[RMDB]
RNA sequence: GGGAACGACUCGAGUAGAGUCGAAAAACGCAUUUCGAUGCGUCGUACUCCUAAGUCGCUCGCGAAGAACUCAUGCGAGCUUGGACCCUAUCGGAAACGAUAGGCUAGCUCGGAUGAGGGAGCGAGCGAUAUGGAUCUGGUGAGCGUUCGCGCUCAAGGACCUCAUGAAUUUCGAUUCAUGAGGUCCAAAAGAAACAACAACAACAAC
Reactivity to 2A3 in 0.01 (KOAc 150mM, MgCl2 10mM, bicine 150mM(pH8.5), 24C), signal-to-noise 1, nucleotides 027 to 156: a010c030g010c010a000u060u140u250c290g230a000u020g000c000g000u070c020g020u050a110c110u000c020c000u010a130a050g070u020c000g010c000u020c000g000c010g160a230a140g000a020a010c000u020c030a000u170g140c000g060a040g020c030u000u050g030g060a150c000c000c010u000a000u000c000g010g010a150a050a150c000g010a000u000a010g010g000c000u000a000g010c000u000c000g090g000a000u000g000a000g010g020g000a020g010c000g000a030g010c000g000a000u000a010u050g000g000a040u050c140u170g090g010u090g100a000g000c020g000u130u220c220g040c010g010c090u030c020a000a050
Overview:
Structure probing data (2A3) for a 207-nucleotide construct. For 2A3, 904 sequencing reads were counted. It was measured as part of the RMDB library RNAMAK. 2A3 adducts were read by reverse transcription with SuperScript II with manganese.